[RMDB]
RNA sequence: GGGAACGACUCGAGUAGAGUCGAAAAUCGAUCGGUACAAGGAGGAGAGGGAAGCCUUCAUAUGGCUGAUACGGAACUAUCUCGAUGAAGAGUGGUUCAGGAAGACGUUCGAGCUCUCUUUCGAGCGCGCAUAGCCCUUAUUCGUAAGGGCUAUGCGAAAAGAAACAACAACAACAAC
Reactivity to DMS in 0.01 (KOAc 150mM, MgCl2 10mM, bicine 150mM(pH8.5), 24C), signal-to-noise 3, nucleotides 027 to 126: u010c080g000a040u000c060g040g040u010a090c110a060a160g010g020a060g000g010a090g030a080g020g000g030a130a070g000c010c010u000u000c140a060u010a090u010g020g000c010u000g010a100u010a110c120g030g000a010a010c030u000a130u020c010u010c000g000a190u020g000a130a100g010a040g040u000g010g000u000u010c010a070g020g020a100a030g000a070c130g010u000u000c050g000a190g010c060u000c030u000c110u000u020u000c050g000a080g010c150g020
Reactivity to 2A3 in 0.01 (KOAc 150mM, MgCl2 10mM, bicine 150mM(pH8.5), 24C), signal-to-noise 3, nucleotides 027 to 126: u080c030g010a010u030c020g000g030u090a060c030a080a070g040g000a010g010g020a080g020a100g080g060g010a040a020g010c000c000u050u040c040a060u050a080u290g020g000c010u000g000a020u030a120c060g030g000a020a010c010u020a040u200c020u020c010g160a190u270g150a100a120g010a010g020u030g020g010u010u010c000a000g040g070a010a050g070a030c010g000u000u030c040g010a000g000c010u010c000u030c000u110u060u010c020g010a020g020c070g000
Annotation
Structure probing data (DMS and 2A3) for a 177-nucleotide construct. The RNA was probed in 150 mM KOAc, 10 mM MgCl2 and 150 mM bicine (pH 8.5) at 24 C. 2A3 adducts were read by reverse transcription with SuperScript II with manganese.